RNA sequence: GGGAACGACUCGAGUAGAGUCGAAAAGGUGUGGGUCAUUCUGUAUGAGGGAACAGUUUGGGGAGUAGUCAACAUAGUGGUCAGAAGAGUUUUUUAAAACUCCAAACCUCAGAUUGUUGUCUGCAUAUACCCUUUUUGGCAACAGGUAGUCCUUAUACGCUCAUACCUGAUUCGUCAGGUAUGAGCGAAAAGAAACAACAACAACAAC
Reactivity to 2A3 in 0.01 (KOAc 150mM, MgCl2 10mM, bicine 150mM(pH8.5), 24C), signal-to-noise 1, nucleotides 027 to 156: g000g000u090g000u080g090g040g010u030c010a050u070u070c050u040g090u090a100u050g060a080g000g000g010a020a020c040a070g040u040u120u200g020g050g000g000a010g000u010a000g010u020c010a050a000c000a000u100a010g070u030g000g000u010c020a000g120a140a020g010a020g000u000u000u000u000u060u190a160a170a010a000c020u000c000c000a000a000a000c000c000u010c020a020g050a170u000u040g000u000u000g010u040c020u030g000c000a060u060a040u200a240c040c000c000u080u000u000u100u060g140g010c070a050a010c000a050g050g000u020a000g050u090c010c010u080u150a190u010a140
An RNA of 207 nucleotides, treated with 2A3 and read out base by base. Source: RMDB library OK3TST, as collected in RNAgym.